[RMDB]
The record gives the reactivity of an RNA of 177 nucleotides to DMS and 2A3. The DMS profile rests on 1,656 reads. Conditions: 150 mM KOAc, 10 mM MgCl2 and 150 mM bicine (pH 8.5), 24 C.
RNA sequence: GGGAACGACUCGAGUAGAGUCGAAAAAUAACAUUUUUUUCUGGGGGUGUCUAAAUGGGAAGGCGAUAACAUGUAGUUGUAAUUUAAGCCAUAGUGAUAAAUUUGAAUGCGUGUUACCCAUGAGUGACCUAACCGAGGAGUUCGCUCCUCGGUUAGGAAAAGAAACAACAACAACAAC
Reactivity to DMS in 0.01 (KOAc 150mM, MgCl2 10mM, bicine 150mM(pH8.5), 24C), signal-to-noise 1, nucleotides 027 to 126: a030u030a100a130c100a150u000u000u010u010u000u000u020c050u000g000g010g000g010g040u000g020u000c030u010a040a100a010u020g040g020g000a070a090g010g010c030g030a240u010a010a000c020a040u000g010u000a030g010u000u010g000u020a020a080u000u000u000a010a050g000c080c000a090u030a090g010u080g010a080u020a020a020a060u000u010u030g000a030a030u050g000c050g020u000g080u010u050a040c070c030c010a030u000g010a070g000u000g000a150
Reactivity to 2A3 in 0.01 (KOAc 150mM, MgCl2 10mM, bicine 150mM(pH8.5), 24C), signal-to-noise 2, nucleotides 027 to 126: a000u190a040a030c140a170u220u000u030u020u000u000u060c130u130g000g000g000g000g000u000g020u060c020u010a030a110a030u050g040g020g000a080a000g150g030c080g030a000u000a030a000c030a050u000g000u010a050g100u040u000g030u040a000a030u090u000u000a150a000g000c000c010a100u190a030g140u200g090a070u010a070a000a020u000u000u160g190a110a080u040g020c030g000u060g000u070u170a060c000c000c000a020u140g080a020g080u070g010a050